An RNA of 177 nucleotides, treated with DMS and read out base by base. The DMS profile rests on 1,295 reads. For DMS the reverse transcriptase was MarathonRT. The RNA was probed in 150 mM KOAc, 10 mM MgCl2 and 150 mM bicine (pH 8.5) at 24 C. It was measured as part of the RMDB library OK2TST.

[RMDB]
RNA sequence: GGGAACGACUCGAGUAGAGUCGAAAAUUUUUGAUUCAGGGGAUACAUGCAUAGGUUUGUUACAUGGGUAUAUCAUGUGAUGCUGAGGUUUGGGGUACAAUUGAUCCUGUCACCCAGGUAGUGAGCAGAUAGUCCGCAAAUUCGUUUGCGGACUAUCAAAAGAAACAACAACAACAAC
Reactivity to DMS in 0.01 (KOAc 150mM, MgCl2 10mM, bicine 150mM(pH8.5), 24C), signal-to-noise 1, nucleotides 027 to 126: u020u000u000u010u000g010a080u010u010c060a050g020g020g000g000a110u040a080c050a060u000g000c110a100u010a120g020g010u000u000u030g010u000u010a050c020a030u000g000g000g000u000a120u000a080u010c030a040u000g010u010g010a050u000g010c090u000g000a110g070g000u010u000u000g000g010g000g020u000a070c070a060a070u000u010g000a060u000c110c040u000g000u000c040a050c020c070c010a130g010g000u000a040g030u000g010a020g020c100a140